[RMDB]
RNA sequence: GGGAACGACUCGAGUAGAGUCGAAAAGAUAUGGAACUACUAGGGAGUAACGGUCGGAAACGACCGAAUUACAUCGAUCUAGAGUUCCUAAGUCAAACGAAACUUGUUCCUUCGGGAACAAGUUUCGCUUGACAUAAAUGUUCGCAUUUAUGUCAAGAAAAGAAACAACAACAACAAC
Reactivity to 2A3 in 0.01 (KOAc 150mM, MgCl2 10mM, bicine 150mM(pH8.5), 24C), signal-to-noise 5, nucleotides 027 to 126: g000a000u020a010u050g000g010a000a000c000u300a200c010u000a050g040g000g000a050g030u010a060a020c000g000g000u000c000g010g000a020a010a010c000g000a000c010c010g010a010a000u030u010a000c030a090u300c040g010a010u000c000u010a000g000a000g010u010u000c010c000u000a010a010g000u000c020a130a060a080c040g000a000a000a000c010u000u000g000u000u020c020c000u030u090c300g130g000g000a000a000c000a000a000g000u000u000u000c000g010
Reactivity to DMS in 0.01 (KOAc 150mM, MgCl2 10mM, bicine 150mM(pH8.5), 24C), signal-to-noise 7, nucleotides 027 to 126: g000a030u000a030u010g000g000a010a010c000u000a170c010u000a020g000g000g000a020g020u000a020a050c010g000g000u010c010g020g000a010a010a030c010g010a010c010c000g000a030a090u000u010a000c000a300u010c220g010a050u010c000u000a020g000a040g000u000u010c000c000u000a010a070g000u000c010a100a090a260c020g000a000a000a010c000u000u000g000u000u000c000c000u000u020c240g030g010g010a010a000c000a000a010g000u000u000u000c000g010